[RMDB]
The record gives the reactivity of an RNA of 177 nucleotides to DMS and 2A3. The data come from the RNA Mapping Database (RMDB), libraries RFM100 and RFMREP. Conditions: 150 mM KOAc, 10 mM MgCl2 and 150 mM bicine (pH 8.5), 24 C. Reactivities are given for positions 27 through 126.
RNA sequence: GGGAACGACUCGAGUAGAGUCGAAAAGAAACGUUUCUCCGGAAACGCUUCCUUGCACAAAAGGAUUGCCCACAUGGCACUCAGCGUUGAAGAAAAAGCUCAGAUCGUAACCGACUACCAGCAAGCUUCGUCUAUAACGUUUCGACGUUAUAGACGAAAAAGAAACAACAACAACAAC
Reactivity to DMS in 0.01 (KOAc 150mM, MgCl2 10mM, bicine 150mM(pH8.5), 24C), signal-to-noise 2, nucleotides 027 to 126: g040a010a090a110c010g010u000u000u000c000u000c280c230g000g000a000a000a000c010g010c010u010u000c000c030u000u000g000c160a070c150a030a030a070a180g000g000a040u030u010g000c020c030c100a190c160a110u010g000g030c010a030c020u020c110a080g010c040g030u010u010g000a120a070g000a020a050a080a060a080g000c040u000c040a010g040a120u000c080g060u000a030a140c040c000g000a160c070u020a090c030c080a010g000c020a100a040g010c190u090
Reactivity to 2A3 in 0.01 (KOAc 150mM, MgCl2 10mM, bicine 150mM(pH8.5), 24C), signal-to-noise 5, nucleotides 027 to 126: g010a000a030a000c040g010u010u060u000c030u040c020c100g090g020a000a020a010c000g010c000u020u000c000c000u020u070g050c120a060c040a100a170a000a000g070g010a040u020u100g040c000c020c000a100c020a100u150g030g000c030a020c090u090c040a030g000c010g060u120u160g040a110a080g110a010a110a000a000a030g020c000u040c040a020g010a130u020c020g030u060a020a020c040c000g050a010c020u060a080c030c010a020g040c040a070a040g030c030u020